[RMDB]
RNA sequence: GGGAACGACUCGAGUAGAGUCGAAAAACUUUCUCGGCCAGAUUGGCCAUGGGAGGCUUUCUUGGGGACCAGAGAGUCUGCAGGGAGGGCAAGUCAAGAGCAGGUGAGAGGGAGGGAAGGGCGAGCAGUUAAUAAGGUUUUUCGAAACCUUAUUAACAAAAGAAACAACAACAACAAC
Reactivity to DMS in 0.01 (KOAc 150mM, MgCl2 10mM, bicine 150mM(pH8.5), 24C), signal-to-noise 3, nucleotides 027 to 126: a080c080u000u000u000c030u000c100g030g020c000c010a110g010a210u010u000g020g040c010c010a020u000g010g020g010a070g000g010c060u010u000u000c020u000u000g000g000g000g000a070c060c040a140g000a080g000a120g020u000c020u010g010c070a080g000g010g010a070g000g030g020c090a070a100g000u000c080a050a090g010a060g010c040a100g010g000u000g000a070g000a160g020g030g010a100g010g030g020a090a090g000g000g000c070g000a060g000c100a120
Reactivity to 2A3 in 0.01 (KOAc 150mM, MgCl2 10mM, bicine 150mM(pH8.5), 24C), signal-to-noise 4, nucleotides 027 to 126: a000c030u090u100u000c040u040c020g050g000c030c010a240g030a300u230u300g150g000c000c020a010u000g030g020g010a030g000g020c000u050u080u020c020u060u100g010g000g000g040a030c020c020a040g050a010g020a040g220u000c020u060g060c070a020g000g040g040a120g010g040g000c050a070a050g040u080c040a070a010g010a040g050c050a050g060g050u160g070a070g050a080g040g050g040a180g020g000g030a090a050g060g030g000c040g010a040g040c020a020